RNA sequence: GGGAACGACUCGAGUAGAGUCGAAAACAUACUAUACUACAUUGCACUGUGUACUAGUAUGGAUAGGGCACUAAUCUUUACUCUAUUUAGUGCAAAACUAUAAUUUCUCGUACAACAUAAAAUGUGACGAUUUUUAUUGGUUCGCCAAUAAAAAUCGAAAAGAAACAACAACAACAAC
Reactivity to 2A3 in 0.01 (KOAc 150mM, MgCl2 10mM, bicine 150mM(pH8.5), 24C), signal-to-noise 2, nucleotides 027 to 126: c000a000u010a030c020u060a030u030a040c060u030a000c020a040u110u210g210c120a050c130u090g000u000g010u020a000c030u000a060g020u000a010u020g000g000a010u020a040g080g010g000c020a000c000u010a030a030u000c060u090u250u210a130c020u100c080u120a110u090u090u030a020g000u000g000c000a060a120a060a080c030u020a020u010a110a100u020u040u000c000u000c010g070u100a050c030a110a010c020a140u230a130a170a080a130u160g030u040g060a030
Reactivity to DMS in 0.01 (KOAc 150mM, MgCl2 10mM, bicine 150mM(pH8.5), 24C), signal-to-noise 1, nucleotides 027 to 126: c000a000u000a020c000u010a040u000a040c250u010a040c000a040u000u000g080c200a080c170u000g000u010g010u040a000c240u000a040g020u000a000u000g000g000a130u000a030g000g000g000c040a000c000u000a000a000u000c220u020u000u020a140c150u000c140u020a020u000u000u000a020g000u000g000c030a060a070a140a090c040u000a020u000a090a190u000u000u000c030u000c000g000u000a190c200a080a050c050a020u010a030a040a060a300u000g010u010g000a100
Structure probing data (2A3 and DMS) for a 177-nucleotide construct.
Reactivities are rounded to 0.1 and cut off at 0 and 3.
Conditions: 150 mM KOAc, 10 mM MgCl2 and 150 mM bicine (pH 8.5), 24 C.
Source: RMDB library RFMREP, as collected in RNAgym.